[RMDB]
RNA sequence: GGGAACGACUCGAGUAGAGUCGAAAAUUUUGAGUUCUGGAUAGACAUUUUCUCUCUAGCAGUCCCAGGGUUGGGAGAUGGGGGUUGAUGGAUUAUGAGAAGAGACGCCGUCUGUAUAAUUAGAGCUGCUGCCUGAUGCUCUUGCCAUCUUGCCCGAGCGAUAUAUUGUGUUCGCACAAUAUAUCGCAAAAGAAACAACAACAACAAC
Reactivity to 2A3 in 0.01 (KOAc 150mM, MgCl2 10mM, bicine 150mM(pH8.5), 24C), signal-to-noise 1, nucleotides 027 to 156: u140u110u070u110g040a040g010u100u000c050u120g050g000a050u040a070g070a020c040a110u140u110u170u040c010u030c000u000c010u030a000g060c040a020g050u050c030c010c030a000g110g000g020u170u100g030g050g000a110g040a040u120g020g040g000g040g010u000u050g020a030u030g040g000a050u140u060a030u300g030a050g010a050a000g010a020g040a000c060g050c070c020g010u050c020u030g110u020a120u030a170a270u070u090a040g000a020g070c010u020g010c010u140g040c040c040u040g000a010u060g010c000u000c000u000u020g040c010c010a000u020c010u050u040g050c000c000c000g020a010